An RNA of 177 nucleotides, treated with DMS and 2A3 and read out base by base.

RNA sequence: GGGAACGACUCGAGUAGAGUCGAAAAGAUAUGGAGGACCAUACAGCUUGGACCAUGACGGUCGGAAACGACCGCAUGCUAGCUGUGGUCCUCCUAAGUCAAACGGUAGUGGUUCGCCACUACCGAAUCAUGAUAUCGGCUUCGGCCGAUAUCAUGAAAAAGAAACAACAACAACAAC
Reactivity to DMS in 0.01 (KOAc 150mM, MgCl2 10mM, bicine 150mM(pH8.5), 24C), signal-to-noise 3, nucleotides 027 to 126: g000a030u000a030u000g000g010a030g020g000a000c020c000a090u010a100c110a000g000c000u010u010g000g000a030c300c000a000u000g000a130c010g010g030u000c010g030g000a000a010a040c000g000a010c000c010g020c000a010u000g030c020u000a020g030c010u000g020u000g000g000u000c000c000u000c010c000u000a000a030g000u010c010a110a170a300c030g000g000u000a010g000u000g000g010u000u020c210g020c020c000a020c000u000a010c010c000g010a010a040
Reactivity to 2A3 in 0.01 (KOAc 150mM, MgCl2 10mM, bicine 150mM(pH8.5), 24C), signal-to-noise 2, nucleotides 027 to 126: g000a000u010a000u080g000g000a000g000g010a010c010c000a010u110a210c080a050g030c010u300u300g080g010a020c010c000a010u000g090a240c000g000g000u030c000g000g000a010a010a000c010g000a010c000c000g010c000a010u000g000c000u050a050g000c000u020g030u010g000g000u000c000c010u000c000c000u000a000a000g020u000c020a020a030a040c020g030g020u030a010g000u010g100g050u110u090c300g020c070c000a000c020u010a010c000c000g000a000a080
DMS adducts were read by reverse transcription with MarathonRT.